[RMDB]
RNA sequence: GGGAACGACUCGAGUAGAGUCGAAAAUCGGUAACACCCGAAGCCGGUGGCCCAACCCCUUGCGGGAGGGAGCUGUCGAAGGUGGGACUGGCGAUUGGGACGAAGUCGUAACAAGGUAGCCGUACCGCCAAUCUACCCCAUUCGUGGGGUAGAUUGGAAAAGAAACAACAACAACAAC
Reactivity to 2A3 in 0.01 (KOAc 150mM, MgCl2 10mM, bicine 150mM(pH8.5), 24C), signal-to-noise 2, nucleotides 027 to 126: u080c030g010g010u040a160a030c010a050c040c010c030g050a020a010g020c010c020g100g020u040g060g090c000c000c000a110a260c020c010c010c010u090u240g040c210g020g010g020a010g020g000g000a050g030c010u010g040u070c030g020a030a020g040g000u060g000g000g050a060c050u020g000g040c020g080a090u000u080g010g050g010a000c040g030a150a050g120u190c020g010u040a030a040c060a060a070g120g040u050a020g050c000c010g060u040a020c030c020g010
Reactivity to DMS in 0.01 (KOAc 150mM, MgCl2 10mM, bicine 150mM(pH8.5), 24C), signal-to-noise 2, nucleotides 027 to 126: u010c040g030g000u030a060a140c080a100c060c040c030g000a120a240g010c100c010g000g000u000g010g000c010c030c000a080a210c100c010c010c050u020u000g030c190g000g000g000a230g000g010g010a300g000c020u000g010u000c030g000a060a110g000g010u000g000g000g000a020c070u000g010g000c040g020a130u010u010g000g000g030a080c050g010a140a110g020u010c020g000u020a060a070c070a050a070g000g000u000a140g000c010c020g010u000a120c070c040g030